[RMDB]
This 177-nucleotide RNA was probed chemically with DMS. In probing experiments dimethyl sulfate is read out at A N1 and C N3, which are open when not base-paired. Conditions: 150 mM KOAc, 10 mM MgCl2 and 150 mM bicine (pH 8.5), 24 C. It was measured as part of the RMDB library TTRDES.

RNA sequence: GGGAACGACUCGAGUAGAGUCGAAAAGAUAUGGACACGUUACAAAGAGCGAGGAUCGUACACGGUGCCUAUAUCGGAAACGAUAUAGUCUCGUGUACGGGAGCUCAUAAAGACGUGUCCUAAGUCAGUAAGAAAUCUCGUUCGCGAGAUUUCUUACAAAAGAAACAACAACAACAAC
Reactivity to DMS in 0.01 (KOAc 150mM, MgCl2 10mM, bicine 150mM(pH8.5), 24C), signal-to-noise 2, nucleotides 027 to 126: g000a050u000a260u000g000g000a000c000a000c010g020u000u060a160c240a150a170a260g010a020g000c000g000a100g030g010a020u000c000g020u010a000c010a000c000g010g000u000g030c120c010u000a000u010a000u000c000g010g000a060a050a120c010g000a010u000a000u000a020g000u010c000u000c000g010u000g000u000a000c000g000g000g000a010g020c000u000c010a080u020a070a140a270g010a010c020g020u000g010u000c000c010u010a000a060g020u000c010a150